[RMDB]
RNA sequence: GGGAACGACUCGAGUAGAGUCGAAAAAAGAUAUGGAUCCGGACGACGCUUGGAUUUAUACAGGACCAGUAUUCGGAAACGAAUACCUAGUACUGUAUUGUCAGCGUCGGUACGGAUCCUAAGUCAACAUUACGUAAACGUUCGCGUUUACGUAAUGAAAAGAAACAACAACAACAAC
Reactivity to DMS in 0.01 (KOAc 150mM, MgCl2 10mM, bicine 150mM(pH8.5), 24C), signal-to-noise 7, nucleotides 027 to 126: a120a080g010a040u000a300u000g000g000a000u000c000c010g000g000a190c020g000a010c010g020c000u010u020g030g010a030u010u000u000a000u000a010c000a010g000g010a050c100c180a130g010u000a000u000u000c000g010g000a140a100a220c010g020a010a000u010a000c120c080u000a050g010u000a040c000u000g000u000a000u000u000g000u000c000a030g010c000g010u000c000g010g000u010a060c010g000g000a000u000c000c000u000a000a080g010u000c030a150a250
Reactivity to 2A3 in 0.01 (KOAc 150mM, MgCl2 10mM, bicine 150mM(pH8.5), 24C), signal-to-noise 4, nucleotides 027 to 126: a000a000g050a020u060a040u110g010g000a000u000c010c010g000g000a010c010g010a000c010g020c030u100u220g200g010a050u250u300u040a020u020a010c010a010g020g010a010c030c000a010g010u000a010u000u000c010g010g040a060a070a060c020g000a010a000u010a000c010c030u030a020g010u010a020c000u000g000u020a000u020u020g020u020c010a000g000c000g020u000c000g000g010u090a000c000g000g010a000u000c000c000u000a010a000g040u010c020a020a040